[RMDB]
Source information:
Structure probing data (DMS and 2A3) for a 177-nucleotide construct. For DMS, 1,312 sequencing reads were counted. For 2A3, 564 sequencing reads were counted. It was measured as part of the RMDB library OK2TST. For 2A3 the reverse transcriptase was SuperScript II with manganese. For DMS the reverse transcriptase was MarathonRT.

RNA sequence: GGGAACGACUCGAGUAGAGUCGAAAAGCUCUUGCUGAUAUGCCGGCAAAUAGGCUAAUACGUUGUCUUUAUAGGCACUGAGACUGGAAAUGACUGGAGCUAAUAGUUUUUGCUGAUCGGCUGAUAGCCGUCUGCGUGUAUUCGUACACGCAGACGGAAAAGAAACAACAACAACAAC
Reactivity to DMS in 0.01 (KOAc 150mM, MgCl2 10mM, bicine 150mM(pH8.5), 24C), signal-to-noise 2, nucleotides 027 to 126: g000c030u010c040u000u010g010c030u000g000a110u000a070u000g030c070c050g030g020c040a010a060a150u010a090g000g020c020u000a050a090u000a100c100g010u000u000g030u000c010u000u010u010a170u010a060g000g000c020a030c080u020g010a100g000a130c070u010g020g020a050a060a130u000g000a080c030u020g000g000a050g010c050u000a030a060u050a070g010u000u000u000u000u000g000c060u000g000a090u000c050g000g020c020u030g020a100u010a100g000
Reactivity to 2A3 in 0.01 (KOAc 150mM, MgCl2 10mM, bicine 150mM(pH8.5), 24C), signal-to-noise 1, nucleotides 027 to 126: g070c020u000c000u100u100g000c030u050g010a080u000a030u270g110c060c010g000g040c050a040a060a110u180a040g000g000c010u020a070a060u050a150c100g130u090u070g020u000c000u000u170u110a140u160a140g000g030c080a000c040u100g030a030g050a110c030u100g070g060a180a070a040u180g030a090c030u030g000g110a100g000c000u080a030a040u060a060g160u000u090u070u060u100g080c040u060g010a160u080c060g010g010c010u040g140a100u100a070g010